The record gives the reactivity of an RNA of 207 nucleotides to DMS and 2A3. The DMS profile rests on 3,538 reads. The data come from the RNA Mapping Database (RMDB), library RNAMAK. The reactions ran in a buffer of 150 mM KOAc, 10 mM MgCl2 and 150 mM bicine (pH 8.5), at 24 C.
RNA sequence: GGGAACGACUCGAGUAGAGUCGAAAAUGCUGCCUGUUCGCAGGCAGCAAAAAAGCGUACUACGCUAGGGACGUGGACUACCCACCUUGUCCCAAAUAGGACAAGAGGUCCGUCCCUUGGACCGUAUCGCAAAAACCUCAAACUUCGGUUUGAGGAACCGAAUUAAGUGAUUCGUCACUUAAUUCGGAAAAGAAACAACAACAACAAC
Reactivity to DMS in 0.01 (KOAc 150mM, MgCl2 10mM, bicine 150mM(pH8.5), 24C), signal-to-noise 2, nucleotides 027 to 156: u000g010c000u000g030c020c000u000g000u000u000c300g040c040a010g000g030c000a010g010c000a000a000a040a010a040a020g040c010g020u000a100c140u000a030c030g030c030u000a080g020g030g020a030c040g010u020g010g030a070c010u000a060c030c010c050a300c170c000u000u000g000u000c000c030c010a010a100a190u010a050g010g000a030c020a030a020g020a180g000g030u000c000c020g020u010c000c010c000u000u000g000g000a070c110c010g010u000a110u000c030g000c020a110a010a070a140a110c000c000u000c000a010a000a020c000u010u020c280g020g000u000u000u000g010a030g090g020a000a030
Reactivity to 2A3 in 0.01 (KOAc 150mM, MgCl2 10mM, bicine 150mM(pH8.5), 24C), signal-to-noise 3, nucleotides 027 to 156: u150g000c000u010g030c000c000u030g030u020u050c300g030c100a000g000g010c020a020g020c010a000a000a000a000a000a000g040c060g010u090a110c080u040a000c040g000c060u020a000g000g000g000a000c010g090u230g080g000a020c070u180a220c050c020c010a020c010c000u010u000g000u000c000c000c020a120a220a110u170a040g000g010a000c000a010a010g000a020g040g000u010c000c000g000u000c010c010c000u000u040g000g010a000c010c050g020u040a040u300c010g000c020a000a100a060a060a070c000c000u000c000a000a000a000c000u060u100c270g110g000u000u000u000g000a000g000g010a010a010